[RMDB]
RNA sequence: GGGAACGACUCGAGUAGAGUCGAAAAUCAAGCGUGCUACCCAUACCUCGCCGUCGGGGUAGAAACGAAGCCCCGACGAGUAGGCAGGCGUGGAGGUUUGUGACGAAGCCUUGGGAGUGAUCCCGGGUACGUAAUAAAGUUUCGACUUUAUUACGUAAAAAGAAACAACAACAACAAC
Reactivity to DMS in 0.01 (KOAc 150mM, MgCl2 10mM, bicine 150mM(pH8.5), 24C), signal-to-noise 9, nucleotides 027 to 126: u020c040a070a080g010c030g020u010g010c030u010a060c030c000c010a060u010a300c010c010u000c090g060c030c000g010u000c000g010g000g010g010u000a050g010a080a120a140c300g010a150a230g000c000c000c000c010g010a010c010g000a040g020u020a050g010g010c130a040g000g000c090g040u000g010g010a060g010g010u010u000u000g010u000g010a120c060g000a080a100g010c010c000u000u040g040g000g000a040g000u040g000a140u000c000c000c000g000g000g010
Reactivity to 2A3 in 0.01 (KOAc 150mM, MgCl2 10mM, bicine 150mM(pH8.5), 24C), signal-to-noise 9, nucleotides 027 to 126: u100c020a040a010g030c010g050u060g020c010u040a050c000c000c000a010u030a030c000c010u060c140g020c010c000g010u010c010g000g000g010g010u050a070g180a090a130a020c140g050a120a020g020c000c000c000c000g000a000c000g000a000g000u040a040g030g050c050a010g010g010c030g010u020g010g020a070g030g050u060u110u080g060u060g060a030c050g050a050a010g020c010c030u140u300g020g010g000a030g010u110g020a060u010c000c000c000g000g000g000